Structure probing data (DMS) for a 177-nucleotide construct.
DMS adducts were read by reverse transcription with MarathonRT.
Source: RMDB library OK2TST, as collected in RNAgym.
The reactions ran in a buffer of 150 mM KOAc, 10 mM MgCl2 and 150 mM bicine (pH 8.5), at 24 C.
Reactivities are given for positions 27 through 126.
RNA sequence: GGGAACGACUCGAGUAGAGUCGAAAAUGGAACCACAAGGGGCGGGGAAACGCCCGCACAGCUCGAGGCAGUUCUCAACGUCCUCGCUCACGCCCGCCGCCCCCUACUGAUUCUGGGAGACGCAGUGCGUUCAAGCAGCGUUCGCGCUGCUUGAACGAAAAGAAACAACAACAACAAC
Reactivity to DMS in 0.01 (KOAc 150mM, MgCl2 10mM, bicine 150mM(pH8.5), 24C), signal-to-noise 1, nucleotides 027 to 126: u030g050g030a070a150c050c030a040c180a150a110g000g000g000g020c000g010g010g010g000a080a110a110c130g000c000c030c020g000c050a050c090a110g000c000u000c040g000a010g050g010c110a270g000u000u000c050u000c040a150a180c110g000u000c000c020u000c000g020c060u000c030a070c130g020c020c050c050g010c030c010g010c010c000c000c000c050u000a120c210u000g010a110u010u030c040u010g040g050g010a050g000a060c050g050c060a070g030u010g000